RNA sequence: GGGAACGACUCGAGUAGAGUCGAAAAAUCCCAGUGAAGAGUCUGGGGACCCCCGUUGGGAAGCGAAGACCCUGUGGAGCUUUACUGCAGCCUGCCGUUGCUCCACAGCUGGGGGUGCGCAGGGUAGAUAGCCAAAUUCAUUCGUGAAUUUGGCUAUAAAAGAAACAACAACAACAAC
Reactivity to DMS in 0.01 (KOAc 150mM, MgCl2 10mM, bicine 150mM(pH8.5), 24C), signal-to-noise 4, nucleotides 027 to 126: a130u020c000c010c010a160g010u020g010a110a160g010a160g010u010c010u000g010g010g010g000a050c000c000c000c000c000g020u010u000g000g000g000a080a060g020c230g010a140a110g000a080c000c010c010u010g030u000g010g000a030g000c000u020u040u020a030c060u000g010c060a170g020c200c130u010g020c010c070g000u000u010g010c000u010c000c000a010c010a010g000c120u030g010g010g000g020g030u000g000c010g030c000a030g010g000g020u010a080g010
Reactivity to 2A3 in 0.01 (KOAc 150mM, MgCl2 10mM, bicine 150mM(pH8.5), 24C), signal-to-noise 4, nucleotides 027 to 126: a020u060c020c000c020a040g090u110g100a110a110g030a010g080u000c000u000g040g040g010g100a020c000c000c000c000c010g140u210u170g020g020g060a120a080g090c100g090a100a000g090a160c000c000c000u000g000u000g020g000a010g010c010u130u170u150a020c010u020g030c000a050g260c050c140u130g010c020c000g010u010u030g000c000u000c000c000a000c000a010g000c000u020g000g000g050g000g000u030g020c020g010c000a010g050g030g000u060a040g060
Chemical mapping of a 177-nucleotide RNA with DMS and 2A3. For 2A3, 2,196 sequencing reads were counted. The data come from the RNA Mapping Database (RMDB), libraries RFM100 and RFMREP. Reactivities are given for positions 27 through 126. Reactivities are rounded to 0.1 and cut off at 0 and 3. 2A3 adducts were read by reverse transcription with SuperScript II with manganese. DMS adducts were read by reverse transcription with MarathonRT.